[RMDB]
RNA sequence: GGGAACGACUCGAGUAGAGUCGAAAAAGCCAGGAGUUCUGGGUGCGGACCCGCAGCGUGUGUGGCACCUACACGCUAAGUACAGGUCCUUCCUCUGGAGGUCGCUUGUCCUGGAGGCGCAGGAAACGUAAAAAUACUUUUUCGAAAGUAUUUUUACAAAAGAAACAACAACAACAAC
Reactivity to 2A3 in 0.01 (KOAc 150mM, MgCl2 10mM, bicine 150mM(pH8.5), 24C), signal-to-noise 7, nucleotides 027 to 126: a000g070c030c010a030g030g040a090g050u120u090c040u080g040g000g030u060g050c050g020g020a030c000c010c030g010c050a010g000c020g000u010g000u010g010u090g060g010c030a020c010c000u010a000c010a000c000g000c000u030a090a020g050u060a080c030a060g000g030u020c010c000u010u040c010c000u050c030u040g040g020a040g020g030u070c030g010c060u050u080g030u030c000c010u020g020g030a040g030g030c040g000c020a010g080g000a070a060a020c070
Reactivity to DMS in 0.01 (KOAc 150mM, MgCl2 10mM, bicine 150mM(pH8.5), 24C), signal-to-noise 8, nucleotides 027 to 126: a080g010c020c060a060g000g010a090g010u010u020c050u010g010g010g010u000g010c300g000g000a060c020c020c030g010c140a040g000c010g020u000g020u000g010u020g010g010c040a030c050c020u010a030c020a010c020g000c010u000a060a120g020u020a090c110a110g000g000u000c020c010u000u010c050c020u010c050u000g000g000a080g000g010u020c050g010c050u000u000g000u000c020c010u000g010g010a080g000g000c060g000c050a070g010g000a070a110a100c160
The record gives the reactivity of an RNA of 177 nucleotides to 2A3 and DMS. Source: RMDB libraries RFM100 and RFMREP, as collected in RNAgym. Reactivities are given for positions 27 through 126. For DMS the reverse transcriptase was MarathonRT. The RNA was probed in 150 mM KOAc, 10 mM MgCl2 and 150 mM bicine (pH 8.5) at 24 C.